[RMDB]
Description:
Chemical mapping of a 177-nucleotide RNA with DMS and 2A3. Values cover nucleotides 27 to 126. It was measured as part of the RMDB library OK1LIB.

RNA sequence: GGGAACGACUCGAGUAGAGUCGAAAAUCACGUGUUUGAUGUCAACUAUGCUGGUAUGGGACACGACGUAUGUAAGCAUAGAUAGACUACAUACGCAGUAGUCAGUAGUCUAUCAAAACUGACUGCAGAUAGUAAUCUGAUUCGUCAGGUUACUAUCAAAAGAAACAACAACAACAAC
Reactivity to DMS in 0.01 (KOAc 150mM, MgCl2 10mM, bicine 150mM(pH8.5), 24C), signal-to-noise 9, nucleotides 027 to 126: u030c060a140c080g010u000g000u000u000u000g010a090u000g010u000c030a040a130c060u010a040u010g010c030u000g010g010u000a020u010g000g000g010a030c060a040c060g010a120c050g010u010a010u010g000u010a060a070g010c040a060u010a070g010a110u020a090g010a050c020u000a070c010a090u010a040c070g010c120a160g010u010a040g000u010c060a060g010u000a050g010u020c110u020a070u020c110a030a040a070a050c060u010g010a010c010u000g010c020a140
Reactivity to 2A3 in 0.01 (KOAc 150mM, MgCl2 10mM, bicine 150mM(pH8.5), 24C), signal-to-noise 9, nucleotides 027 to 126: u080c020a020c050g020u020g030u010u020u050g110a070u060g010u020c000a020a030c040u030a020u080g010c010u030g020g040u060a050u040g030g010g030a010c010a010c060g100a020c030g060u050a030u140g140u080a050a050g000c010a020u020a030g030a030u070a020g020a030c000u010a010c010a040u090a020c040g010c090a050g060u070a010g020u030c030a000g000u020a000g010u000c050u070a090u070c080a010a020a010a040c040u030g030a000c000u010g000c010a030
DMS adducts were read by reverse transcription with MarathonRT.
The DMS profile rests on 68,866 reads.
For 2A3, 119,655 sequencing reads were counted.